[RMDB]
Chemical mapping of a 177-nucleotide RNA with 2A3 and DMS. Reactivities are rounded to 0.1 and cut off at 0 and 3. The DMS profile rests on 7,006 reads. Conditions: 150 mM KOAc, 10 mM MgCl2 and 150 mM bicine (pH 8.5), 24 C. DMS adducts were read by reverse transcription with MarathonRT.
RNA sequence: GGGAACGACUCGAGUAGAGUCGAAAAGCAACGGGAGGGAGGCCGGAAGCGCGAACCGGCCAAACGCGCACCAUGGAAAGAGCACAAAAAGAAGUUGAAGUGCUCACAACUUCACCGUCCCAACAAAUAUCUAUUACUCAUUCGUGAGUAAUAGAUAAAAAGAAACAACAACAACAAC
Reactivity to 2A3 in 0.01 (KOAc 150mM, MgCl2 10mM, bicine 150mM(pH8.5), 24C), signal-to-noise 5, nucleotides 027 to 126: g010c020a030a120c040g020g000g010a060g030g030g010a030g020g020c020c000g030g030a120a020g040c040g000c030g070a020a040c020c010g010g000c020c020a020a020a000c020g000c010g000c020a040c050c020a070u080g010g040a080a130a060g010a010g020c040a010c040a020a140a030a000a030g180a070a030g040u090u100g070a170a030g000u020g020c000u020c000a020c010a010a020c000u060u040c030a080c130c020g040u030c010c010c000a020a030c020a010a100a010
Reactivity to DMS in 0.01 (KOAc 150mM, MgCl2 10mM, bicine 150mM(pH8.5), 24C), signal-to-noise 6, nucleotides 027 to 126: g010c150a090a100c030g010g000g000a090g010g010g010a200g000g010c020c010g000g000a080a110g010c050g020c040g000a060a130c030c010g010g010c020c030a030a050a080c080g000c030g010c030a090c070c060a110u010g010g010a050a050a110g000a020g010c010a010c030a020a080a090a080a060g010a100a080g010u000u010g000a130a140g000u010g000c000u000c020a080c090a050a080c010u000u000c010a070c040c020g010u010c010c000c000a070a070c220a060a060a090